The record gives the reactivity of an RNA of 207 nucleotides to DMS. It was measured as part of the RMDB library M2RFPK. DMS adducts were read by reverse transcription with MarathonRT. For DMS, 2,267 sequencing reads were counted.
[RMDB]
RNA sequence: GGGAACGACUCGAGUAGAGUCGAAAAUUGAAAUUGAACCGUCCUGUUAUCGAAAGAUAGGCAGAAGAUACGAAAUGUGUGACAGCAUGGGAAGUAAAGGCAGACGGUGGUUCCCUUGAGUAUCUUAAUUAGGGGGACGAGUUCGCUCGUCCCCCAACUACUAACGAACGUUCGCGUUCGUUAGUAGAAAAGAAACAACAACAACAAC
Reactivity to DMS in 0.01 (KOAc 150mM, MgCl2 10mM, bicine 150mM(pH8.5), 24C), signal-to-noise 1, nucleotides 027 to 156: u020u000g000a120a050a110u010u010g080a060a050c020c010g020u010c030c020u010g010u010u000a020u010c030g000a210a150a230g010a060u010a030g000g000c080a100g000a030a040g020a020u000a090c020g020a040a050a060u000g030u010g000u020g020a190c190a240g000c000a060u010g000g030g040a080a040g040u010a090a100a100g020g020c050a000g000a030c000g010g020u000g030g000u000u000c020c010c010u000u010g040a110g000u000a060u000c070u010u000a080a080u000u000a220g050g020g020g000g000a030c000g020a030g000u000u010c150g000c010u010c010g000u000c000c000c000c000c000a000a010
The reactions ran in a buffer of 150 mM KOAc, 10 mM MgCl2 and 150 mM bicine (pH 8.5), at 24 C.